[RMDB]
RNA sequence: GGGAACGACUCGAGUAGAGUCGAAAACUAACAUACAUGUGCUCAGGAGAGCCUGAUUUUAAGACUGACUUCACCCCAUUGCUCUUGUGUUCCAGAACCUUCAAGGAACAUCACCUACCAGAUCCAAGCUUUGCCAGCUUAGCUUUCCUCAUGAUCAGCCGUAAAUUUUAUUCGUAAAAUUUACGGCAAAAGAAACAACAACAACAAC
Reactivity to 2A3 in 0.01 (KOAc 150mM, MgCl2 10mM, bicine 150mM(pH8.5), 24C), signal-to-noise 4, nucleotides 027 to 156: c010u040a070a020c020a080u220a030c040a060u120g030u060g070c020u030c050a080g000g090a130g050a030g110c010c020u090g060a110u130u090u090u110a110a040g060a090c030u050g030a020c010u070u040c090a070c000c020c010c010a040u020u100g000c010u010c000u070u090g020u020g010u040u010c020c010a050g040a130a100c050c030u130u120c080a100a070g000g020a010a030c000a040u050c020a030c010c010u080a040c010c050a020g000a070u030c030c010a020a020g020c040u000u030u030g040c020c020a020g020c020u030u030a010g020c000u040u010u010c010c010u070c010a020u110g050a090u120c040a040
Reactivity to DMS in 0.01 (KOAc 150mM, MgCl2 10mM, bicine 150mM(pH8.5), 24C), signal-to-noise 2, nucleotides 027 to 156: c010u000a080a070c100a150u010a150c070a080u000g000u010g040c050u020c030a090g000g020a150g020a040g010c010c030u000g020a080u010u000u000u000a000a150g030a140c030u000g000a100c000u000u010c030a100c020c030c030c030a290u000u000g000c000u000c060u020u010g040u000g010u000u040c030c030a180g020a100a160c050c030u010u000c080a070a210g020g000a040a040c040a060u010c020a080c020c030u010a040c030c040a150g000a050u000c030c060a090a100g020c020u000u000u010g050c000c020a110g000c120u000u000a090g070c060u000u010u000c020c030u010c060a070u000g000a070u000c080a250